[RMDB]
RNA sequence: GGGAACGACUCGAGUAGAGUCGAAAAGGAGGCGGCCGAUCUGCGCCGGCAGCUGGCGGGCGCGCCGCAGUCGCCCGCACCGGCCGAGCGGCAGCCACUGCAGCUGUCGCCGCGCGUGCUGCCCAGCUGUGCUCCUAGAGUUCGCUCUAGGAGCACAAAAAGAAACAACAACAACAAC
Reactivity to DMS in 0.01 (KOAc 150mM, MgCl2 10mM, bicine 150mM(pH8.5), 24C), signal-to-noise 1, nucleotides 027 to 126: g030g050a190g020g000c020g000g020c040c010g000a020u040c070u010g000c000g010c280c020g000g000c000a010g020c080u030g030g030c070g010g020g000c040g030c280g020c010c010g000c010a060g010u010c170g010c070c010c070g000c160a090c270c110g000g010c020c030g010a140g000c000g030g000c000a230g000c010c030a030c110u010g020c040a040g000c000u000g030u010c000g000c300c000g020c010g000c020g010u000g000c000u000g010c000c010c000a080g000c170